This 177-nucleotide RNA was probed chemically with DMS and 2A3.
The RNA was probed in 150 mM KOAc, 10 mM MgCl2 and 150 mM bicine (pH 8.5) at 24 C.
Source: RMDB library OK1LIB, as collected in RNAgym.

RNA sequence: GGGAACGACUCGAGUAGAGUCGAAAACAAAAAUUAAAAUGUUGGAGAAGAUAUGGAUAGUGUGGAAAUUUUAUGUGCUUCUUUACACCCACUCUGGAAUAGAGACAUUAUCUUGCAAAGCUGAACACAUUAUCUUUAGGUUCGCCUAAAGAUAAUGAAAAGAAACAACAACAACAAC
Reactivity to DMS in 0.01 (KOAc 150mM, MgCl2 10mM, bicine 150mM(pH8.5), 24C), signal-to-noise 5, nucleotides 027 to 126: c040a020a040a070a100a160u060u040a050a050a090a090u020g000u000u010g000g010a160g000a100a070g010a110u020a050u000g000g000a040u010a020g030u010g010u000g000g000a150a040a040u010u010u010u020a040u030g010u010g010c040u000u010c030u000u000u010a080c150a090c030c020c030a110c060u020c030u000g000g000a050a020u010a030g000a300g000a050c050a030u010u010a030u000c020u000u000g010c110a030a050a130g010c030u000g010a050a070c160a200
Reactivity to 2A3 in 0.01 (KOAc 150mM, MgCl2 10mM, bicine 150mM(pH8.5), 24C), signal-to-noise 6, nucleotides 027 to 126: c030a000a110a080a000a020u300u300a090a150a030a130u170g000u050u050g060g040a130g010a100a030g050a030u030a030u100g080g000a050u090a170g050u040g000u030g040g110a050a160a140u160u170u030u040a150u140g070u040g040c020u070u070c000u030u100u090a020c020a020c010c010c010a040c000u020c010u020g080g090a110a100u120a160g020a010g010a010c000a020u080u080a030u070c000u040u030g030c060a030a040a060g000c030u080g080a070a010c060a000